Source: RMDB library ARCHII, as collected in RNAgym. Structure probing data (2A3) for a 207-nucleotide construct. The reactions ran in a buffer of 150 mM KOAc, 10 mM MgCl2 and 150 mM bicine (pH 8.5), at 24 C.
RNA sequence: GGGAACGACUCGAGUAGAGUCGAAAAAGGACCAGUCACCUCGUAAAUCCAUCUGGGAAACUACAAACGCCAACGACGAGCGUUUCGCUCUCGCCGCUUAAUCCCGGCGGGCGCUGCACCGGCAGGUCUCUGGGCCGGGUGGUUCCAGCGUAAGCUGCACGGCUGUAGAGUUCGCUCUACAGCCGUGAAAAGAAACAACAACAACAAC
Reactivity to 2A3 in 0.01 (KOAc 150mM, MgCl2 10mM, bicine 150mM(pH8.5), 24C), signal-to-noise 1, nucleotides 027 to 156: a050g040g000a000c010c010a020g100u100c040a050c070c040u080c060g080u060a070a050a060u020c010c020a050u010c100u140g020g010g060a080a090a010c080u150a040c040a020a050a010c020g020c000c000a050a070c100g190a060c030g030a060g070c010g010u090u020u050c070g020c000u000c000u000c020g010c020c010g010c050u020u070a090a070u110c040c030c020g000g000c000g000g020g000c070g050c000u080g040c020a000c050c020g110g000c050a060g040g090u040c000u030c060u200g040g060g000c020c030g010g000g000u010g030g010u030u010c010c010a010g010c030g050u060a080a010g010c030u090g010